Source: RMDB library RFM100, as collected in RNAgym.
Chemical mapping of a 177-nucleotide RNA with 2A3.
For 2A3 the reverse transcriptase was SuperScript II with manganese.
RNA sequence: GGGAACGACUCGAGUAGAGUCGAAAACAGGUCUGUGAUGCCCUUAGAUAUCCUGGGCAGCACGCGUGCUACAGUGAUAUAUAUAAUGUGUUACACCACCUGAGAGGGCGGUGCAAUCAUAAAUGUAUUCACGGGUUUUGUUCGCAAAACCCGUGAAAAAAGAAACAACAACAACAAC
Reactivity to 2A3 in 0.01 (KOAc 150mM, MgCl2 10mM, bicine 150mM(pH8.5), 24C), signal-to-noise 1, nucleotides 027 to 126: c000a010g190g000u050c030u090g020u030g030a000u070g000c040c000c000u120u160a190g060a040u170a000u150c020c060u000g000g000g030c000a030g030c000a030c030g060c110g000u050g000c090u120a180c040a050g000u050g190a020u020a000u000a000u000a000u000a210a180u120g000u000g000u080u000a000c000a000c000c000a010c000c000u030g000a030g010a020g000g000g040c000g000g000u000g050c050a000a020u000c000a000u000a160a140a000u110g020u000a100
The reactions ran in a buffer of 150 mM KOAc, 10 mM MgCl2 and 150 mM bicine (pH 8.5), at 24 C. Values cover nucleotides 27 to 126.